[RMDB]
RNA sequence: GGGAACGACUCGAGUAGAGUCGAAAAGAUAUGGAGACUCUGCAAACGUGUGUGGACUAAGACAGGAUUACGGUCGGAAACGACCGUAAUCUCGAGUCCAACACGGACGUAUAGAGUCUCCUAAGUCGUACGUUUAGUACUUCGGUACUAAACGUACAAAAGAAACAACAACAACAAC
Reactivity to 2A3 in 0.01 (KOAc 150mM, MgCl2 10mM, bicine 150mM(pH8.5), 24C), signal-to-noise 1, nucleotides 027 to 126: g060a050u150a080u190g000g020a010g020a000c010u010c010u030g090c140a180a190a130c040g020u040g020u060g300u110g050g010a010c010u070a200a140g160a140c160a130g010g050a010u000u020a000c000g000g010u020c010g020g010a090a080a050c010g000a000c010c000g000u000a000a000u010c000u010c000g010a000g010u010c020c000a000a030c000a000c000g010g040a030c090g000u030a180u120a260g000a010g000u000c000u000c010c000u000a010a010g050u010c070
Reactivity to DMS in 0.01 (KOAc 150mM, MgCl2 10mM, bicine 150mM(pH8.5), 24C), signal-to-noise 2, nucleotides 027 to 126: g010a080u000a300u000g010g020a070g030a030c000u000c000u000g020c080a110a300a300c020g040u020g000u000g030u010g010g010a020c020u020a140a060g010a150c300a060g000g020a000u000u000a010c000g020g000u000c020g000g010a130a090a250c010g000a000c010c000g010u000a000a000u000c000u000c050g000a030g000u000c000c000a030a020c010a000c000g000g020a050c300g010u000a120u000a040g010a020g000u000c030u000c000c000u010a000a060g000u000c180
An RNA of 177 nucleotides, treated with 2A3 and DMS and read out base by base.
The RNA was probed in 150 mM KOAc, 10 mM MgCl2 and 150 mM bicine (pH 8.5) at 24 C.
The DMS profile rests on 1,464 reads.
The data come from the RNA Mapping Database (RMDB), library TTRINS.
For 2A3 the reverse transcriptase was SuperScript II with manganese.